An RNA of 177 nucleotides, treated with 2A3 and DMS and read out base by base. The data come from the RNA Mapping Database (RMDB), library VIROID. Conditions: 150 mM KOAc, 10 mM MgCl2 and 150 mM bicine (pH 8.5), 24 C. 2A3 is a SHAPE reagent: it acylates the 2'-hydroxyl of flexible nucleotides of all four kinds.
RNA sequence: GGGAACGACUCGAGUAGAGUCGAAAAGGGGCACGACUCUUCUCAGAAUCCAUACCUAGAGAGGUGCGCACGGCGGAGGUGCUCUGGAUACAAGCUCUGCCUUCGAAACACCAUCGAUCGUGCCUUCGCUUAAACUAGAGUUCGCUCUAGUUUAAGCAAAAGAAACAACAACAACAAC
Reactivity to 2A3 in 0.01 (KOAc 150mM, MgCl2 10mM, bicine 150mM(pH8.5), 24C), signal-to-noise 4, nucleotides 027 to 126: g000g000g000g020c010a000c010g020a010c050u010c000u110u020c020u020c010a020g040a050a040u060c080c020a050u060a160c030c030u170a060g010a010g010a020g040g020u040g020c040g010c030a040c060g000g000c000g000g000a010g020g060u100g030c040u050c080u110g090g040a060u120a250c040a050a070g040c000u010c020u040g020c010c000u020u060c030g050a120a100a020c020a020c020c020a030u090c080g040a060u010c000g010u000g000c000c000u030u060c050
Reactivity to DMS in 0.01 (KOAc 150mM, MgCl2 10mM, bicine 150mM(pH8.5), 24C), signal-to-noise 5, nucleotides 027 to 126: g000g000g010g040c040a050c000g010a060c080u010c040u000u010c000u000c040a060g010a120a100u020c100c070a120u010a140c130c020u010a100g010a040g010a060g010g010u010g020c070g000c160a090c210g000g000c010g000g000a010g010g010u000g020c060u010c100u000g010g010a140u010a100c080a040a100g010c040u000c020u000g000c020c010u000u000c100g000a090a140a070c020a060c080c020a150u000c110g000a060u000c020g010u000g010c010c020u000u000c110